An RNA of 177 nucleotides, treated with DMS and read out base by base.
[RMDB]
RNA sequence: GGGAACGACUCGAGUAGAGUCGAAAAGAUAUGGACAGGGACUACCAGUUAUGCUGGGACAUGAAGACCUAUCGGAAACGAUAGGCUUCAACAGCCCAGGCAUAACUGGUAGUCCCUGUCCUAAGUCGCCUAAAUUUAUGUUCGCAUAAAUUUAGGCAAAAGAAACAACAACAACAAC
Reactivity to DMS in 0.01 (KOAc 150mM, MgCl2 10mM, bicine 150mM(pH8.5), 24C), signal-to-noise 2, nucleotides 027 to 126: g020a170u010a300u010g000g020a010c000a010g010g030g000a040c010u000a020c010c000a010g010u000u000a000u000g000c010u000g010g010g000a030c120a250u000g000a030a000g000a210c000c000u000a010u010c000g000g010a110a090a300c010g000a030u000a000g000g010c000u000u010c010a040a040c280a180g010c020c000c000a040g010g010c000a000u000a000a010c010u000g020g020u000a010g010u010c000c000c010u010g010u000c000c000u000a020a050g000u010c110
The RNA was probed in 150 mM KOAc, 10 mM MgCl2 and 150 mM bicine (pH 8.5) at 24 C.
For DMS, 2,232 sequencing reads were counted.
The data come from the RNA Mapping Database (RMDB), library TTRINS.
For DMS the reverse transcriptase was MarathonRT.